[RMDB]
An RNA of 177 nucleotides, treated with 2A3 and DMS and read out base by base.
Conditions: 150 mM KOAc, 10 mM MgCl2 and 150 mM bicine (pH 8.5), 24 C.
It was measured as part of the RMDB library OK2TRN.
For DMS the reverse transcriptase was MarathonRT.
The DMS profile rests on 13,745 reads.
RNA sequence: GGGAACGACUCGAGUAGAGUCGAAAAUUGGUCGCCAUUGAUGGCACGGUUCCAGCAUCCGGGGACAAGGAACCGGCCUCCCGGCACAUCUGGGUCAGUUAUCCAUCGGCAACGGCUCAUUCGCCAACCUGACUAAAUUAUUCGUAAUUUAGUCAGGAAAAGAAACAACAACAACAAC
Reactivity to 2A3 in 0.01 (KOAc 150mM, MgCl2 10mM, bicine 150mM(pH8.5), 24C), signal-to-noise 6, nucleotides 027 to 126: u060u070g050g010u070c050g020c040c020a030u030u160g070a090u110g050g000c130a080c180g000g000u030u020c010c010a020g030c030a100u070c070c060g120g020g020g020a020c050a080a110g040g010a050a030c020c000g010g000c000c000u010c020c010c000g020g010c020a030c010a070u050c050u050g020g000g030u020c020a050g010u040u070a060u080c020c010a030u030c020g010g000c010a030a030c020g000g010c020u010c060a080u090u060c050g040c050c010a030a060
Reactivity to DMS in 0.01 (KOAc 150mM, MgCl2 10mM, bicine 150mM(pH8.5), 24C), signal-to-noise 9, nucleotides 027 to 126: u000u010g020g020u010c080g020c010c030a150u000u010g010a090u010g010g020c080a130c030g010g010u000u000c010c010a130g020c240a130u010c050c060g010g010g010g000a110c090a120a170g000g000a030a020c030c020g020g010c030c020u000c030c130c050g010g000c100a050c080a060u000c070u000g020g000g010u000c040a060g000u010u010a100u000c020c040a030u000c050g010g010c070a080a070c050g000g000c020u000c090a130u000u000c050g020c040c050a070a180